[RMDB]
This 177-nucleotide RNA was probed chemically with DMS and 2A3. Source: RMDB library OK1LIB, as collected in RNAgym. For DMS, 2,645 sequencing reads were counted. The 2A3 profile rests on 911 reads.
RNA sequence: GGGAACGACUCGAGUAGAGUCGAAAACAUCAGCAAGGCGUAUGUACAACCUUCAGGGGACUGGUGAUUUUGUGACAAUGAAUGAUUUCCCAUCGAUUCAGAUCACCUAGUUGUCGCAACACAACUCUACCCUCCUACUGUUCGCAGUAGGAGGGUAAAAAGAAACAACAACAACAAC
Reactivity to DMS in 0.01 (KOAc 150mM, MgCl2 10mM, bicine 150mM(pH8.5), 24C), signal-to-noise 3, nucleotides 027 to 126: c030a090u030c030a090g020c090a110a060g010g050c120g100u050a020u020g030u010a080c150a060a160c020c030u000u010c010a050g070g000g000g000a160c080u010g050g010u010g000a040u010u010u020u010g000u010g000a030c090a060a120u000g000a020a030u010g010a020u010u010u000c000c000c000a180u000c080g020a040u010u010c080a070g010a080u000c020a030c030c120u000a180g010u020u010g010u000c020g020c260a040a010c120a020c180a120a070c110u010c140
Reactivity to 2A3 in 0.01 (KOAc 150mM, MgCl2 10mM, bicine 150mM(pH8.5), 24C), signal-to-noise 3, nucleotides 027 to 126: c030a020u130c040a000g060c050a040a010g060g030c030g010u140a060u230g170u070a050c080a140a030c040c020u080u200c130a090g010g000g000g080a050c050u090g000g040u060g120a110u000u000u160u060g100u030g010a040c120a130a020u030g020a090a000u010g060a070u050u050u000c040c000c000a050u100c020g020a000u090u090c030a030g080a090u040c020a000c030c060u000a030g020u000u050g070u050c000g000c050a050a100c030a020c010a180a200c000u080c000